Description
The data come from the RNA Mapping Database (RMDB), library OK3TST. Structure probing data (2A3) for a 207-nucleotide construct. 2A3 adducts were read by reverse transcription with SuperScript II with manganese. Values are in units of 0.01, from 0 to 300, in steps of 10.
RNA sequence: GGGAACGACUCGAGUAGAGUCGAAAAUGUUGGCCGAUUCAUUCUGUAAAUCAACAUAAACAGCAGGUUUUCUCUCUGGGCUUAAUUUCUCAGCAGGAAAUCAGCAUAGGGAAACUUCAGGCUGCAUCUCUGCCAGUCUAGCAGAUCUCUGCCAGUAGUGAUUACGUCAUUUCGAUGACGUAAUCACAAAAGAAACAACAACAACAAC
Reactivity to 2A3 in 0.01 (KOAc 150mM, MgCl2 10mM, bicine 150mM(pH8.5), 24C), signal-to-noise 2, nucleotides 027 to 156: u050g020u020u080g060g000c030c020g020a070u100u120c040a090u150u040c060u110g090u030a070a100a080u150c030a030a090c030a040u190a070a190a030c040a030g050c020a030g000g000u000u050u190u000c030u000c020u000c030u050g040g050g000c000u030u070a100a040u050u110u020c060u030c070a110g070c080a030g000g020a000a000a030u060c030a020g030c020a060u100a070g030g000g000a030a060a000c010u060u070c050a060g020g000c000u020g000c020a140u030c040u030c040u080g070c080c000a070g020u030c020u040a020g020c010a020g000a150u020c110u020c000u060g050c020c010a050g040u210a030
Description: The reactions ran in a buffer of 150 mM KOAc, 10 mM MgCl2 and 150 mM bicine (pH 8.5), at 24 C.